[RMDB]
RNA sequence: GGGAACGACUCGAGUAGAGUCGAAAACCGCACGAGAUUGAGAGGCCAGGCACCAGUAGCAAUCAGCAGUUGCAGCAGUCGCAACACCACCAAAUGGAACUAGACGAUCAGUCGGGACUGAGCGGGAGCACCAUAGUACGUUCGCGUACUAUGGUGCAAAAGAAACAACAACAACAAC
Reactivity to 2A3 in 0.01 (KOAc 150mM, MgCl2 10mM, bicine 150mM(pH8.5), 24C), signal-to-noise 2, nucleotides 027 to 126: c000c000g010c030a070c060g140a110g010a090u090u080g040a090g000a020g050g000c050c050a030g000g040c050a020c050c020a050g010u030a020g010c010a010a100u050c010a010g120c050a040g000u080u080g000c010a040g010c020a020g070u080c050g010c040a010a040c020a020c020c020a040c000c030a040a100a080u060g010g000a020a040c000u000a070g010a110c030g030a080u050c030a030g040u060c020g030g000g050a030c040u040g020a030g090c020g000g080g050a030
Reactivity to DMS in 0.01 (KOAc 150mM, MgCl2 10mM, bicine 150mM(pH8.5), 24C), signal-to-noise 2, nucleotides 027 to 126: c020c000g000c160a120c090g010a130g010a070u010u030g000a090g010a130g010g000c060c050a040g010g020c040a060c060c030a140g010u010a060g000c060a080a080u010c110a100g040c090a110g000u010u000g000c010a170g000c090a040g000u000c090g010c020a080a090c080a150c070c040a110c070c110a040a110a110u000g000g000a090a120c060u000a070g010a060c030g000a080u000c110a030g010u010c040g020g000g020a080c040u010g010a080g020c040g020g000g000a100